[RMDB]
Record summary: The data come from the RNA Mapping Database (RMDB), library M2RFPK. This 207-nucleotide RNA was probed chemically with DMS and 2A3.

RNA sequence: GGGAACGACUCGAGUAGAGUCGAAAAUCAAUCGCAUUGUUGGGAGAAAGUUGGAGGAUAAAUCCUCACCAAGAUUUAAAUUAAGCAAGAGAUAUAAGGCCGCUCCUUAUAUUGCGACUUGCUUAAAGAUAUCCGGCAAAGUUCGCUUUGCCGGAAACCACAUCAUUAUGUUCGCAUAAUGAUGUGGAAAAGAAACAACAACAACAAC
Reactivity to DMS in 0.01 (KOAc 150mM, MgCl2 10mM, bicine 150mM(pH8.5), 24C), signal-to-noise 1, nucleotides 027 to 156: u010c060a090a060u020c100g030c110a220u010u000g000u010u000g010g000g040a270g000a070a080a070g000u000u000g020g010a060g020g050a080u000a070a140a240u000c010c010u000c040a050c000c040a090a130g020a200u000u000u000a030a080a130u000u010a020a000g030c000a030a060g000a300g000a010u000a010u000a000a010g010g040c090c300g000c260u050c010c000u000u000a000u000a040u000u010g040c020g020a140c020u010u010g000c030u000u000a020a010a140g020a220u000a080u000c020c000g010g000c010a000a020a040g060u000u010c300g050c020u010u000u000g000c030c020g020g000a000a000a050
Reactivity to 2A3 in 0.01 (KOAc 150mM, MgCl2 10mM, bicine 150mM(pH8.5), 24C), signal-to-noise 1, nucleotides 027 to 156: u060c000a000a070u080c100g000c090a100u050u050g010u000u110g030g050g010a120g070a160a180a120g140u140u150g060g000a000g000g060a000u060a170a110a030u060c000c000u020c020a030c000c050a020a010g040a070u080u170u280a080a080a030u050u020a040a000g010c010a000a000g000a010g000a040u020a010u000a060a000g030g020c040c000g070c070u200c060c030u010u010a010u000a030u040u050g050c080g030a110c040u000u000g000c000u010u000a000a000a000g020a000u050a060u070c000c000g000g000c000a000a000a040g000u000u090c110g010c140u000u000u000g010c000c000g000g020a000a020a000
For DMS the reverse transcriptase was MarathonRT.